[RMDB]
RNA sequence: GGGAACGACUCGAGUAGAGUCGAAAAGAUGAGGUUAAGAACUAGAGAGAACUGGAGACGCGUGAUGACGCUCAAGAGAAAACGCGAGAAUGAGCAAGUGUGCUAGACGAAGCACACAAGAGGAAGAGCCCAUUUUACCAUUCGUGGUAAAAUGGGCAAAAGAAACAACAACAACAAC
Reactivity to 2A3 in 0.01 (KOAc 150mM, MgCl2 10mM, bicine 150mM(pH8.5), 24C), signal-to-noise 2, nucleotides 027 to 126: g170a110u080g060a030g010g000u090u170a030a000g010a010a050c050u000a050g000a020g030a000g020a190a050c060u040g010g010a050g000a000c000g010c010g040u110g010a150u100g000a000c010g000c030u010c020a040a040g090a000g020a040a100a020a030c040g050c120g000a080g040a030a130u030g000a060g050c020a080a070g000u010g010u000g000c000u020a060g010a110c120g060a170a000g070c020a000c000a000c000a000a030g050a010g040g100a090a020g010a020
Reactivity to DMS in 0.01 (KOAc 150mM, MgCl2 10mM, bicine 150mM(pH8.5), 24C), signal-to-noise 2, nucleotides 027 to 126: g000a060u030g000a030g000g000u010u010a000a070g000a130a020c040u000a070g010a090g010a150g010a110a120c060u000g000g000a070g000a100c030g030c030g020u000g010a080u020g000a080c170g000c030u000c050a020a120g000a180g020a040a000a030a060c070g030c130g000a120g000a190a030u020g000a030g000c140a090a120g040u000g030u000g000c010u030a000g030a120c270g000a070a040g010c020a000c000a000c000a040a090g020a050g010g030a060a080g010a220